[RMDB]
RNA sequence: GGGAACGACUCGAGUAGAGUCGAAAAAAUGCUGAUCAGCUGAGGGUUAGCCGGUCCUAAGUCUGCCCGUAAGUCGAAGCAGACAACAGGGAAACAGGUUAAUAUUCCUGUGCCAGUGUGCACUCAAUAGAAUUACGCAGUUCGCUGCGUAAUUCUAAAAAGAAACAACAACAACAAC
Reactivity to DMS in 0.01 (KOAc 150mM, MgCl2 10mM, bicine 150mM(pH8.5), 24C), signal-to-noise 4, nucleotides 027 to 126: a040a010u020g000c000u000g010a080u100c170a070g020c030u000g000a150g020g000g000u000u000a030g020c040c000g000g040u020c000c000u000a120a270g010u000c000u000g020c000c010c040g020u030a130a110g020u030c040g000a120a280g010c000a000g000a000c010a030a060c190a140g000g010g000a030a070a050c040a040g010g010u010u000a060a030u010a160u010u010c000c020u020g000u010g000c010c000a210g010u030g000u030g020c020a020c010u000c100a050a220
Reactivity to 2A3 in 0.01 (KOAc 150mM, MgCl2 10mM, bicine 150mM(pH8.5), 24C), signal-to-noise 3, nucleotides 027 to 126: a000a000u160g000c020u050g000a130u100c080a030g040c040u050g050a090g040g100g030u000u010a000g000c000c000g020g040u080c000c000u020a040a020g000u000c000u000g000c000c000c010g050u140a120a040g190u140c020g000a020a040g000c010a000g000a000c000a010a020c030a040g010g000g070a030a110a020c010a020g020g010u000u000a030a010u020a050u110u020c000c010u030g000u000g030c000c090a160g110u020g060u130g210c000a020c000u090c000a020a090